[RMDB]
RNA sequence: GGGAACGACUCGAGUAGAGUCGAAAAAAAAAGAUAUGGAGUACCCAGACGAUAAGAUCGCUGUCUUUCUCGGAAACGAGAAAGAGUGAACGAUCUUUUGACGUCUGUGGUACUCCUAAGUCAAAAACUACGAUAUCAGGUUCGCCUGAUAUCGUAGAAAAGAAACAACAACAACAAC
Reactivity to DMS in 0.01 (KOAc 150mM, MgCl2 10mM, bicine 150mM(pH8.5), 24C), signal-to-noise 2, nucleotides 027 to 126: a040a080a050a100a080g000a040u000a300u010g010g010a030g020u000a000c000c000c020a000g000a000c000g030a140u010a010a010g000a020u000c000g030c030u010g010u000c000u000u020u000c000u000c010g030g000a110a050a170c000g000a000g000a020a010a010g010a020g010u030g000a070a130c000g010a010u000c010u000u000u000u000g010a240c140g030u000c000u010g000u020g010g010u000a010c010u000c010c000u000a000a050g010u030c010a090a090a080a050a150
Reactivity to 2A3 in 0.01 (KOAc 150mM, MgCl2 10mM, bicine 150mM(pH8.5), 24C), signal-to-noise 1, nucleotides 027 to 126: a000a000a000a060a000g110a060u170a060u170g000g000a000g000u010a000c000c000c000a020g000a000c000g010a030u030a110a010g000a000u000c010g000c080u060g220u060c000u000u000u000c000u000c000g040g050a110a050a060c030g030a010g000a010a000a000g000a010g010u070g090a130a090c040g000a000u000c000u010u020u000u060g140a060c000g000u000c000u000g030u080g000g000u000a000c000u000c000c000u000a000a000g020u010c000a110a000a000a130a020
This 177-nucleotide RNA was probed chemically with DMS and 2A3. 2A3 adducts were read by reverse transcription with SuperScript II with manganese. The RNA was probed in 150 mM KOAc, 10 mM MgCl2 and 150 mM bicine (pH 8.5) at 24 C. For DMS the reverse transcriptase was MarathonRT.